[RMDB]
RNA sequence: GGGAACGACUCGAGUAGAGUCGAAAAUCCAUGUGGACGCGAUGAUCGUUGGCGUGACGCUCAUGGAAUUCCAUAUGAUGUACAGCGCACUCGUCAGUGGUGCUGGUCCCCUCGAGCUGCCGGAGGAUGCUCAUCGUCGUUUCGACGACGAUGAGCAAAAAGAAACAACAACAACAAC
Reactivity to 2A3 in 0.01 (KOAc 150mM, MgCl2 10mM, bicine 150mM(pH8.5), 24C), signal-to-noise 2, nucleotides 027 to 126: u000c000c000a000u060g020u020g010g020a040c010g000c110g240a080u030g020a040u020c040g000u050u090g240g130c150g020u150g030a020c030g030c040u020c000a020u030g000g000a000a150u090u010c000c000a000u030a060u040g040a060u080g070u120a030c000a030g000c010g040c050a020c030u060c070g230u030c120a050g010u040g090g070u080g050c000u000g020g000u050c000c010c000c000u080c050g000a030g000c040u040g120c030c050g100g000a020g050g010a020
Reactivity to DMS in 0.01 (KOAc 150mM, MgCl2 10mM, bicine 150mM(pH8.5), 24C), signal-to-noise 2, nucleotides 027 to 126: u000c070c010a020u000g030u000g010g000a080c300g000c090g000a060u000g010a020u000c050g030u000u000g050g030c160g010u020g020a080c030g010c060u000c000a000u010g000g000a100a120u010u000c000c000a030u000a050u000g010a090u000g010u000a110c090a030g010c060g000c020a070c030u000c230g030u010c150a080g020u000g010g010u000g010c040u000g000g020u000c010c000c020c060u000c090g000a080g020c080u000g010c020c000g020g010a110g000g000a150

This 177-nucleotide RNA was probed chemically with 2A3 and DMS. For DMS the reverse transcriptase was MarathonRT. Reactivities are given for positions 27 through 126. It was measured as part of the RMDB library OK2TST. High DMS reactivity at an A or C suggests that its Watson-Crick edge is free. The reactions ran in a buffer of 150 mM KOAc, 10 mM MgCl2 and 150 mM bicine (pH 8.5), at 24 C.